The record gives the reactivity of an RNA of 207 nucleotides to DMS and 2A3.
RNA sequence: GGGAACGACUCGAGUAGAGUCGAAAAGUUAGGUGAGGCUCCUAUGCAAACACAGGCCACUGCCGAAAAAUGUCCAAAGACGCCAAUGGGUAGAACAGGGAUUGUCGGAUUAAGGCUUUCCAUAAUGAAAACAAAGUAUGCUUCGGCAUACUUUGAAGGACGUAAAGAUGUUCGCAUCUUUACGUCCAAAAGAAACAACAACAACAAC
Reactivity to DMS in 0.01 (KOAc 150mM, MgCl2 10mM, bicine 150mM(pH8.5), 24C), signal-to-noise 1, nucleotides 027 to 156: g010u000u010a010g000g000u000g000a070g030g030c050u000c050c030u000a090u030g020c090a040a120a130c090a100c130a110g010g010c020c000a070c090u000g040c010c000g000a000a080a060a090a090u020g010u030c030c020a070a080a240g010a080c070g000c000c020a070a100u000g020g020g020u000a080g020a020a080c090a080g000g040g000a030u000u010g020u000c010g000g010a130u000u000a100a050g020g020c050u010u010u000c000c000a080u000a060a120u000g000a050a090a090a160c000a010a050a030g020u000a000u000g050c000u000u040c300g040g020c020a000u000a020c010u020u000u000g000a010a080
Reactivity to 2A3 in 0.01 (KOAc 150mM, MgCl2 10mM, bicine 150mM(pH8.5), 24C), signal-to-noise 2, nucleotides 027 to 156: g110u110u090a030g000g020u070g030a050g000g060c000u030c020c030u120a060u150g040c040a030a130a080c040a010c000a060g000g020c080c050a050c050u090g030c010c020g080a160a000a000a000a000u060g010u020c060c000a050a050a030g070a020c000g040c050c000a030a040u050g040g020g030u040a030g060a080a060c070a030g000g000g090a050u000u050g050u080c030g040g000a030u160u180a080a030g000g000c010u010u000u000c000c020a030u080a160a100u120g080a120a060a000a000c000a000a000a000g000u010a010u000g000c000u020u040c100g030g000c000a000u000a000c010u000u000u000g000a020a020
For DMS the reverse transcriptase was MarathonRT. It was measured as part of the RMDB library M2RFPK.